[RMDB]
RNA sequence: GGGAACGACUCGAGUAGAGUCGAAAAAAACAGUAAUUUGCAAAAUGCUCACAAGAGGCACAAGGACCAUUCUGGGCAGUCCUUCUCUUGAACUAAAUUUAGAUCAUUGGUGGCUUGGGCUGUACCGCACAGUUUGGUGAUUCGUCACCAAACUGUGAAAAGAAACAACAACAACAAC
Reactivity to DMS in 0.01 (KOAc 150mM, MgCl2 10mM, bicine 150mM(pH8.5), 24C), signal-to-noise 2, nucleotides 027 to 126: a070a010a030c050a080g020u000a050a080u000u000u000g020c030a060a090a060a040u000g000c070u000c090a260c020a030a030g010a050g000g020c150a100c290a110a040g000g000a030c040c060a120u010u000c110u010g030g000g000c140a060g010u000c000c020u000u000c020u000c030u000u020g000a020a070c090u000a010a070a050u000u000u000a030g010a060u000c020a040u000u020g000g010u000g010g000c110u000u000g030g000g020c010u000g000u000a110c050c030g030

Chemical mapping of a 177-nucleotide RNA with DMS. DMS adducts were read by reverse transcription with MarathonRT. Reactivities are given for positions 27 through 126. For DMS, 1,030 sequencing reads were counted. Reactivities are rounded to 0.1 and cut off at 0 and 3.